[RMDB]
RNA sequence: GGGAACGACUCGAGUAGAGUCGAAAACGGAUCAUUUUCCUUGUGGUUCCUGUGGUUACACCUCGGAAGGCCUCCGCGGACCUGCAGAGAAAAGAAGAAGGGCCCAGAGGGGAAUGAGCCUCGUCGUCAUAUCUCAUGACUUCGGUCAUGAGAUAUGAAAAGAAACAACAACAACAAC
Reactivity to DMS in 0.01 (KOAc 150mM, MgCl2 10mM, bicine 150mM(pH8.5), 24C), signal-to-noise 1, nucleotides 027 to 126: c090g010g010a050u000c010a010u000u000u000u000c010c000u000u010g020u010g000g000u000u000c000c000u000g010u030g000g000u000u000a160c230a100c090c010u000c030g000g050a300a060g000g000c060c010u000c110c210g030c300g000g020a040c090c000u000g010c210a300g000a110g000a080a000a060a060g000a110a140g010a120a070g000g010g000c190c000c030a120g000a050g000g010g020g000a000a000u010g000a040g000c050c010u010c090g000u000c070g010u000
Reactivity to 2A3 in 0.01 (KOAc 150mM, MgCl2 10mM, bicine 150mM(pH8.5), 24C), signal-to-noise 2, nucleotides 027 to 126: c040g010g040a030u020c000a000u000u000u030u020c000c000u030u050g200u100g100g010u100u260c000c010u040g010u110g100g010u000u120a080c070a040c070c000u000c000g040g050a140a090g060g000c020c000u030c000c070g080c140g000g070a290c010c010u040g000c040a010g030a020g010a060a190a060a010g120a060a010g060a010a000g000g020g000c000c010c000a040g020a010g020g010g000g000a030a000u020g010a000g000c010c000u090c040g170u060c030g040u030

Notes: Chemical mapping of a 177-nucleotide RNA with DMS and 2A3. For DMS the reverse transcriptase was MarathonRT. It was measured as part of the RMDB library VIROID. The reactions ran in a buffer of 150 mM KOAc, 10 mM MgCl2 and 150 mM bicine (pH 8.5), at 24 C.